[RMDB]
RNA sequence: GGGAACGACUCGAGUAGAGUCGAAAAAUGCCGCAUUCAGGGACGGUAACUCUAGUGGGCUACUGUCGAUCUAGCGUUGACAUCUACAUACUAUAUAGUAAUACCAAUACUCAAGACUACGAAACGGGGACCAGUCCUAUUUCGAUAGGACUGGUCCAAAAGAAACAACAACAACAAC
Reactivity to 2A3 in 0.01 (KOAc 150mM, MgCl2 10mM, bicine 150mM(pH8.5), 24C), signal-to-noise 1, nucleotides 027 to 126: a000u140g010c000c000g000c100a090u000u000c000a060g140g000g000a000c000g000g000u010a030a020c000u000c000u000a050g000u200g040g000g000c000u000a000c000u000g000u000c000g070a040u000c040u190a040g060c040g000u000u020g000a000c000a090u000c140u070a000c000a060u090a090c010u000a060u170a090u040a110g090u060a030a030u010a030c000c140a020a120u060a070c000u000c070a030a000g070a200c000u000a090c120g080a000a210a160c050g000g010